[RMDB]
An RNA of 177 nucleotides, treated with 2A3 and DMS and read out base by base. For DMS the reverse transcriptase was MarathonRT.
RNA sequence: GGGAACGACUCGAGUAGAGUCGAAAAUGUAAUCGCACUUAACGUAGUAGCAUAAAUUGAAAAGCCAACUACCCAAGAUGGCAAGCGACCACUUGCGGUAAAGAAACUAUUGGUACUUUGGCUCGCGGACAUGGGAAUUCUUCGGAAUUCCCAUGUCAAAAGAAACAACAACAACAAC
Reactivity to 2A3 in 0.01 (KOAc 150mM, MgCl2 10mM, bicine 150mM(pH8.5), 24C), signal-to-noise 3, nucleotides 027 to 126: u090g050u100a100a090u160c110g000c030a060c050u120u030a080a000c110g220u110a050g000u100a020g110c080a070u060a120a200a100u170u080g010a110a120a000a000g000c010c000a030a000c010u040a040c020c000c000a020a020g120a240u000g010g000c040a030a020g170c050g130a100c000c000a000c000u010u020g000c080g060g050u060a080a060a000g090a080a040a020c130u080a040u060u050g050g030u070a040c010u020u000u090g030g010c000u010c080g010c020g030
Reactivity to DMS in 0.01 (KOAc 150mM, MgCl2 10mM, bicine 150mM(pH8.5), 24C), signal-to-noise 2, nucleotides 027 to 126: u000g020u030a090a040u020c070g020c040a050c040u000u000a150a230c070g040u040a000g070u050a100g000c040a060u020a100a110a130u010u040g000a050a090a180a030g000c000c030a010a090c280u000a000c000c000c040a030a030g000a150u010g030g020c060a160a120g000c290g000a040c030c100a060c000u000u000g000c110g050g000u000a080a040a090g010a050a040a050c110u000a180u000u030g000g000u000a040c100u060u020u000g000g040c000u000c060g040c130g000